[RMDB]
RNA sequence: GGGAACGACUCGAGUAGAGUCGAAAAAGACAUCAUGUCUAGCAAAGGCGUCGUUUGUCUUAGACGCUCACACGUCGACAAAACAACACUGGUCGACCGGAUCCACCAGAAAAUCACCUUAGUGUUAAUCGUGGACAUGUUUCGACAUGUCCACGAUAAAAGAAACAACAACAACAAC
Reactivity to 2A3 in 0.01 (KOAc 150mM, MgCl2 10mM, bicine 150mM(pH8.5), 24C), signal-to-noise 1, nucleotides 027 to 126: a000g060a000c000a010u090c020a040u230g020u020c000u020a050g050c080a160a000a000g040g000c000g000u040c070g010u050u050u180g060u000c050u060u030a050g070a030c000g000c040u050c010a060c000a000c060g020u020c020g060a000c000a010a100a040a040c100a110a000c030a040c070u100g000g000u030c010g000a020c000c020g090g020a070u000c000c020a020c010c000a120g100a030a070a010a010u130c030a110c130c060u100u150a070g040u000g040u180u080a050
Reactivity to DMS in 0.01 (KOAc 150mM, MgCl2 10mM, bicine 150mM(pH8.5), 24C), signal-to-noise 2, nucleotides 027 to 126: a020g020a010c010a130u000c160a080u010g010u000c000u000a150g060c150a150a090a050g010g010c010g030u010c070g020u030u000u020g010u000c170u000u000a120g000a070c020g040c010u000c150a060c180a090c080g000u010c010g000a020c090a020a040a080a090c080a050a030c060a140c110u010g010g000u000c070g030a060c020c100g000g010a220u000c010c060a070c050c030a070g000a090a060a100a110u000c050a150c060c120u000u000a060g020u000g030u000u000a040